[RMDB]
RNA sequence: GGGAACGACUCGAGUAGAGUCGAAAAGAAGGCUCAGGUCUCCUGGUCCCUAGAACGGAGGGAACCGCAUGAGGCUGGUUUCACAGAGCAGUGAACACUUCCUUCUCUCGACAGUGGAGGGAUUACAGGCUGCUGCAUUCUCGGUCCAUAUAGCCUGCCAAAUAACCAUGUUCGCAUGGUUAUUUGGAAAAGAAACAACAACAACAAC
Reactivity to DMS in 0.01 (KOAc 150mM, MgCl2 10mM, bicine 150mM(pH8.5), 24C), signal-to-noise 2, nucleotides 027 to 156: g020a000a090g000g030c020u010c080a170g040g000u010c020u000c030c050u000g030g020u000c010c020c000u000a100g010a220a150c110g010g000a180g000g020g010a020a020c060c030g020c140a090u000g010a090g020g070c050u010g030g000u010u000u000c030a100c000a140g000a180g010c070a090g000u010g000a090a090c090a120c080u000u000c010c020u000u000c000u000c020u010c040g050a150c140a100g020u010g020g020a050g000g030g000a090u000u000a090c100a120g000g000c020u010g020c010u000g000c000a150u000u000c000u010c060g010g010u020c000c050a120u010a090u000a090g020c000c040u010g000
Reactivity to 2A3 in 0.01 (KOAc 150mM, MgCl2 10mM, bicine 150mM(pH8.5), 24C), signal-to-noise 5, nucleotides 027 to 156: g050a040a010g020g000c020u040c120a030g020g070u050c030u010c040c010u040g050g040u050c000c000c000u070a110g060a170a050c080g020g050a020g030g010g020a070a060c040c050g040c080a090u180g010a030g030g020c050u030g010g050u030u080u030c070a090c050a030g130a030g080c070a020g030u020g060a070a010c030a010c100u030u040c000c000u020u020c010u000c000u030c050g190a140c080a100g050u060g040g030a010g010g000g000a010u010u160a040c040a020g020g000c010u020g010c010u020g000c040a070u100u010c070u040c040g060g010u000c030c020a030u090a020u050a150g010c020c010u030g000
Source information:
An RNA of 207 nucleotides, treated with DMS and 2A3 and read out base by base. The RNA was probed in 150 mM KOAc, 10 mM MgCl2 and 150 mM bicine (pH 8.5) at 24 C. Reactivities are rounded to 0.1 and cut off at 0 and 3. For 2A3, 3,886 sequencing reads were counted. For DMS the reverse transcriptase was MarathonRT. Reactivities are given for positions 27 through 156. It was measured as part of the RMDB library ARCHII.